RNA sequence: GGGAACGACUCGAGUAGAGUCGAAAAAUAGGCUUAUCAAGAGAGGUGGAGGGACUGUCCCGAUGAAACCCGGCAGCCAGAAAUGGUGCCAUUUCCUGCAGCGGAAACGUUGAAAGAUGAGCCGAUGAAGGCUAUAGCUUCGGCUAUAGCAAAAGAAACAACAACAACAAC
Reactivity to DMS in 0.01 (KOAc 150mM, MgCl2 10mM, bicine 150mM(pH8.5), 24C), signal-to-noise 9, nucleotides 027 to 129: a030u050a070g000g010c020u050u010a030u000c030a100a070g030a110g000a090g000g030u010g010g000a070g010g030g030a170c120u000g010u060c050c010c010g000a070u020g010a070a100a070c040c000c030g010g020c010a100g040c000c040a000g020a090a070a100u030g010g000u020g010c050c030a080u000u000u000c010c010u000g030c060a030g000c000g020g000a060a060a100c060g010u030u030g020a100a100a050g000a000u030g000a000g000c010c010g010a070u000g020a080a080g000
Reactivity to 2A3 in 0.01 (KOAc 150mM, MgCl2 10mM, bicine 150mM(pH8.5), 24C), signal-to-noise 9, nucleotides 027 to 129: a010u170a030g000g000c000u010u000a010u020c040a100a010g130a010g010a070g090g010u030g010g020a040g010g020g010a020c050u100g190u140c000c000c020g080a160u050g030a030a030a030c010c000c000g010g010c040a030g210c000c000a000g030a000a020a010u030g010g010u020g000c000c000a030u010u030u010c000c000u050g050c030a020g010c000g010g010a050a020a020c020g020u020u040g060a110a050a010g010a010u000g000a000g000c010c010g000a050u110g090a050a030g130
Notes
Structure probing data (DMS and 2A3) for a 170-nucleotide construct. 2A3 adducts were read by reverse transcription with SuperScript II with manganese. For 2A3, 46,046 sequencing reads were counted. It was measured as part of the RMDB library 15KLIB.